[RMDB]
RNA sequence: GGGAACGACUCGAGUAGAGUCGAAAACAGUUAUGUGCGUCCCUCCCGUAGCUGCGCGCUCGGUCGAAGAGGACGACCAUCGCCGAUAGAGGACGACCGGUCUUCGGUCAAGGGAAUAAGAGUAAAAGGAAUCUCAACAAUUCGUUGUUGAGAUUCCAAAAGAAACAACAACAACAAC
Reactivity to DMS in 0.01 (KOAc 150mM, MgCl2 10mM, bicine 150mM(pH8.5), 24C), signal-to-noise 2, nucleotides 027 to 126: c050a100g000u000u000a000u000g030u040g000c010g010u000c000c000c000u000c010c000c000g020u000a030g040c010u000g040c220g040c180g010c010u000c020g000g000u020c110g010a070a130g000a090g000g010a070c030g000a050c030c010a040u000c070g010c020c010g000a120u010a080g000a090g010g020a030c030g000a020c110c130g010g000u000c060u010u000c050g050g000u000c030a080a130g010g010g000a080a080u000a070a060g010a080g020u010a100a090a080a120
Reactivity to 2A3 in 0.01 (KOAc 150mM, MgCl2 10mM, bicine 150mM(pH8.5), 24C), signal-to-noise 1, nucleotides 027 to 126: c000a000g020u120u080a070u060g140u060g010c010g010u030c010c010c000u020c010c020c000g060u090a000g000c000u040g070c040g050c020g000c160u010c020g010g000u010c090g040a120a020g030a140g030g030a010c000g010a010c030c000a030u030c030g030c010c010g060a030u070a090g120a070g060g070a030c040g000a040c020c000g040g080u130c090u130u200c050g000g030u000c000a010a000g110g030g010a020a060u100a120a030g070a020g100u100a010a080a010a010